RNA sequence: GGGAACGACUCGAGUAGAGUCGAAAAGGUCGAUCCAUGGGCACGAGGGUACUCUGAGGUAGUGGAUACAGAGGAAUGUCUUCGAGCGCGAGACUUGUAUGCUGAGGCAGUAUUGGACGCGGAGACAGCAAGGGCAGCGGCAAUAGCUUCCGCAGAAUCGCUCAUCUAAAUUCGUUUAGAUGAGCGAAAAAGAAACAACAACAACAAC
Reactivity to 2A3 in 0.01 (KOAc 150mM, MgCl2 10mM, bicine 150mM(pH8.5), 24C), signal-to-noise 2, nucleotides 027 to 156: g030g050u070c040g040a060u000c020c070a030u110g010g010g010c040a040c100g030a050g000g040g010u060a050c010u000c030u100g030a060g020g050u060a030g040u070g110g010a060u050a100c040a030g020a030g040g070a090a080u070g000u000c000u010u060c030g060a090g040c110g020c040g030a020g020a070c020u070u100g040u090a050u130g040c030u020g000a020g040g010c020a020g030u070a080u090u030g000g040a030c020g010c040g020g000a010g010a040c040a020g040c040a040a050g030g000g000c030a040g000c010g010g000c010a010a090u030a050g000c020u030u010c020c020g060c020a010g070a000a050
Reactivity to DMS in 0.01 (KOAc 150mM, MgCl2 10mM, bicine 150mM(pH8.5), 24C), signal-to-noise 2, nucleotides 027 to 156: g020g070u000c030g000a130u010c040c020a130u020g050g010g000c040a110c020g010a120g020g020g060u020a040c020u000c040u000g030a210g040g050u000a070g060u000g010g020a190u000a130c070a080g000a200g040g020a120a060u000g020u000c030u020u000c010g000a150g050c010g040c010g000a090g000a030c050u000u110g020u010a070u000g020c030u000g030a190g030g040c050a070g000u000a130u000u000g040g010a150c060g010c040g000g030a110g020a110c060a060g000c020a030a070g000g010g040c050a070g030c060g000g020c040a020a060u000a090g010c060u000u010c000c010g020c060a140g010a110a150
Overview:
The data come from the RNA Mapping Database (RMDB), library OK3TST. The record gives the reactivity of an RNA of 207 nucleotides to 2A3 and DMS. The 2A3 profile rests on 1,688 reads. The RNA was probed in 150 mM KOAc, 10 mM MgCl2 and 150 mM bicine (pH 8.5) at 24 C.